This 177-nucleotide RNA was probed chemically with DMS and 2A3. Conditions: 150 mM KOAc, 10 mM MgCl2 and 150 mM bicine (pH 8.5), 24 C. The DMS profile rests on 32,205 reads. DMS adducts were read by reverse transcription with MarathonRT. For 2A3, 26,011 sequencing reads were counted. It was measured as part of the RMDB library OK1LIB.

[RMDB]
RNA sequence: GGGAACGACUCGAGUAGAGUCGAAAACGUCGUGAACUAGCGACAAUGCAUUAGGUCCAUCGUUAUCUAACCGAAACAUCGUGACUAGUUCUAGAAUAGAACCAGGAGAGGACGCUGGCAAACAAAGACGGAGUGUAUUAUUCGUAGUACACUCCGUAAAAGAAACAACAACAACAAC
Reactivity to DMS in 0.01 (KOAc 150mM, MgCl2 10mM, bicine 150mM(pH8.5), 24C), signal-to-noise 9, nucleotides 027 to 126: c110g010u010c030g000u000g010a060a030c040u010a040g010c120g000a050c060a060a030u010g010c070a050u010u000a120g010g010u000c060c080a110u020c130g010u020u010a070u020c120u010a100a070c050c020g000a180a100a130c070a030u000c040g000u000g000a130c000u000a010g000u000u000c000u000a150g030a080a090u020a060g010a070a090c010c020a040g000g000a080g000a050g010g000a040c050g010c010u000g000g010c120a060a080a080c160a060a080a070g000
Reactivity to 2A3 in 0.01 (KOAc 150mM, MgCl2 10mM, bicine 150mM(pH8.5), 24C), signal-to-noise 6, nucleotides 027 to 126: c040g020u010c010g030u040g010a040a010c010u010a010g000c010g040a010c010a010a020u050g000c010a020u020u070a010g020g000u000c020c010a090u040c090g040u040u070a070u060c050u040a020a030c020c010g000a030a010a010c030a030u040c030g030u030g100a090c010u010a000g000u000u010c010u010a040g030a110a060u100a040g030a010a010c000c000a010g010g030a070g010a020g030g030a000c010g000c020u010g000g010c010a050a010a010c020a010a080a000g120